Overview: Chemical mapping of a 177-nucleotide RNA with 2A3 and DMS. Reactivities are given for positions 27 through 126. For 2A3, 1,038 sequencing reads were counted. 2A3 is a SHAPE reagent: it acylates the 2'-hydroxyl of flexible nucleotides of all four kinds. The reactions ran in a buffer of 150 mM KOAc, 10 mM MgCl2 and 150 mM bicine (pH 8.5), at 24 C. 2A3 adducts were read by reverse transcription with SuperScript II with manganese.
RNA sequence: GGGAACGACUCGAGUAGAGUCGAAAAUGGGUGUUUAUACCUAACUUUUCACCUGACAUCUGAACAGGAGCAGGGUAUCGCGUUCAAAGUGCUAAUCAGAAAAACGGCAUUCCUUUUGAACAGGUGAGCAACUUCCAAAAUUCGUUUUGGAAGUUGCAAAAGAAACAACAACAACAAC
Reactivity to 2A3 in 0.01 (KOAc 150mM, MgCl2 10mM, bicine 150mM(pH8.5), 24C), signal-to-noise 2, nucleotides 027 to 126: u060g040g000g000u060g050u060u300u160a150u060a030c010c010u020a100a130c000u070u060u050u080c050a100c080c010u030g050a110c070a250u010c060u120g080a150a030c070a120g050g000a030g000c030a020g040g000g010u070a050u180c050g010c090g090u000u010c070a090a020a000g040u000g080c050u100a060a050u140c090a060g210a130a080a030a000a010c020g000g000c020a030u100u080c030c000u060u170u030u070g020a020a000c000a000g000g010u030g050a050
Reactivity to DMS in 0.01 (KOAc 150mM, MgCl2 10mM, bicine 150mM(pH8.5), 24C), signal-to-noise 2, nucleotides 027 to 126: u000g020g000g000u010g000u010u020u020a070u010a030c030c020u000a070a080c130u000u000u010u000c050a130c030c010u000g000a130c070a070u000c030u000g000a130a070c140a070g010g000a050g000c020a050g000g030g000u010a030u000c100g000c160g020u010u000c010a000a130a040g010u000g020c020u010a050a130u010c150a140g000a090a050a080a090a170c190g000g000c020a030u000u020c110c090u000u010u000u000g000a010a090c010a050g000g020u000g020a150